[RMDB]
RNA sequence: GGGAACGACUCGAGUAGAGUCGAAAAGAAAGAAGUCUGUAUUGUUAUCUAAGAGCAGCUUGCCAUCAACUACAAGUGCAGAUGACUGGUUCUGCUGGAUGAAACUCAACAGGUUUGAGUUGCCUGAUAUAGGCACACAGUUCGCUGUGUGCCUAUAAAAAGAAACAACAACAACAAC
Reactivity to DMS in 0.01 (KOAc 150mM, MgCl2 10mM, bicine 150mM(pH8.5), 24C), signal-to-noise 4, nucleotides 027 to 126: g000a080a110a080g000a090a100g000u000c080u000g000u000a200u000u000g020u010u030a040u000c050u010a120a300g000a050g000c000a020g030c300u000u020g000c030c020a080u020c080a060a050c030u000a100c150a130a110g000u070g040c190a060g000a040u000g000a040c100u000g010g010u010u020c020u000g020c010u000g000g030a160u010g000a090a010a050c020u020c090a020a070c070a050g010g010u000u000u010g010a160g020u000u000g010c050c000u000g000a240
Reactivity to 2A3 in 0.01 (KOAc 150mM, MgCl2 10mM, bicine 150mM(pH8.5), 24C), signal-to-noise 3, nucleotides 027 to 126: g130a020a070a000g130a050a000g050u020c030u040g030u070a160u150u060g070u070u070a230u180c020u060a040a050g000a000g030c010a000g020c020u070u080g010c020c000a000u000c050a080a040c010u120a110c040a290a090g090u060g170c000a010g060a060u030g010a030c080u090g100g000u090u060c000u000g050c000u030g080g000a120u180g050a020a010a010c030u060c030a010a040c030a060g050g090u030u050u050g050a040g000u030u050g080c030c000u000g010a030
Notes
An RNA of 177 nucleotides, treated with DMS and 2A3 and read out base by base. DMS adducts were read by reverse transcription with MarathonRT. The RNA was probed in 150 mM KOAc, 10 mM MgCl2 and 150 mM bicine (pH 8.5) at 24 C.